RNA sequence: GGGAACGACUCGAGUAGAGUCGAAAAUUAAUAGAUAGUAUUGCCUCUUUGUUAUGGGCCUUGUAUAGUCUGUAGAUGAUUGUUAAUUACAUAUGCUAGAGGUAUUUACCUUCUUGUCCGAUAGACCACUUCAAAGAGAAAAGAAUUACCAUGUUCACAUUCUGACUUAUUUCGAUAAGUCAGAAUGAAAAGAAACAACAACAACAAC
Reactivity to 2A3 in 0.01 (KOAc 150mM, MgCl2 10mM, bicine 150mM(pH8.5), 24C), signal-to-noise 2, nucleotides 027 to 156: u060u060a000a090u080a100g050a010u010a020g050u070a060u030u050g030c000c000u000c030u030u070u070g060u050u040a050u080g020g020g000c010c000u020u040g060u080a060u020a060g020u010c030u020g050u040a020g030a130u100g020a020u020u100g060u050u060a130a100u160u070a040c030a040u110a060u170g040c020u010a020g010a010g100g000u050a160u050u090u100a040c000c000u030u060c000u000u060g030u000c000c040g020a030u050a020g030a070c000c010a020c040u050u080c040a050a070a000g060a000g040a040a060a050a000g060a030a020u120u080a100c110c040a120u130g010u060u070c080a030
Reactivity to DMS in 0.01 (KOAc 150mM, MgCl2 10mM, bicine 150mM(pH8.5), 24C), signal-to-noise 2, nucleotides 027 to 156: u010u000a070a150u000a090g000a110u010a070g020u000a060u010u000g000c040c010u000c010u000u000u010g020u000u010a040u000g020g020g010c030c030u000u000g040u000a090u000a060g000u010c060u030g010u000a070g030a110u000g010a140u000u010g010u000u000a110a110u000u010a060c070a120u010a100u000g020c070u020a120g000a090g030g030u000a060u010u000u000a030c010c010u020u000c040u000u000g020u000c040c060g000a140u000a050g000a070c030c000a020c040u010u010c020a030a040a040g000a130g020a020a050a080a090g020a080a050u000u010a020c040c010a060u000g010u000u000c010a260